This 207-nucleotide RNA was probed chemically with DMS and 2A3.
For DMS the reverse transcriptase was MarathonRT.
Conditions: 150 mM KOAc, 10 mM MgCl2 and 150 mM bicine (pH 8.5), 24 C.

[RMDB]
RNA sequence: GGGAACGACUCGAGUAGAGUCGAAAAAGCACUGGUACGAUACGUCGUACCAGUGCAGUCGUUGGGAUGGAACGCAAUUAAAUACAUGUGUGACGUGUAUUUGCGAACGACGUAAUUCUUUUUCAAAAUCACGCUAUCGUGUUCGCACGAUAGCGAACUUCUGAAUCUUCUUCGGAAGAUUCAGAAGAAAAGAAACAACAACAACAAC
Reactivity to DMS in 0.01 (KOAc 150mM, MgCl2 10mM, bicine 150mM(pH8.5), 24C), signal-to-noise 1, nucleotides 027 to 156: a150g000c000a000c000u000g000g040u000a000c020g000a110u000a080c290g060u020c000g040u000a020c000c000a000g010u000g020c020a020g010u000c010g010u000u010g010g010g010a120u000g020g030a160a260c040g030c020a050a130u010u000a020a010a030u000a040c010a010u000g010u000g050u010g000a100c030g040u020g010u000a020u000u000u000g020c060g010a040a090c020g000a180c020g010u000a030a120u010u000c050u040u000u000u000u010c070a010a050a130a100u000c170a100c020g000c040u000a010u010c000g080u020g000u000u020c260g030c030a030c000g000a030u000a000g020c010g020a000a010
Reactivity to 2A3 in 0.01 (KOAc 150mM, MgCl2 10mM, bicine 150mM(pH8.5), 24C), signal-to-noise 3, nucleotides 027 to 156: a000g000c000a000c000u030g040g000u000a010c010g010a010u020a020c200g160u000c010g000u040a000c000c000a010g000u000g000c010a000g010u010c020g010u020u040g110g050g070a100u110g050g080a150a040c020g000c010a000a040u200u100a160a030a030u020a000c010a050u030g110u010g130u180g280a090c040g020u000g000u010a010u020u050u070g000c020g010a020a000c030g040a000c010g050u060a050a080u090u100c040u030u090u030u030u060c090a070a040a040a120u130c080a060c110g000c000u010a000u000c010g020u000g040u090u080c150g040c070a000c000g000a000u000a000g010c000g000a000a000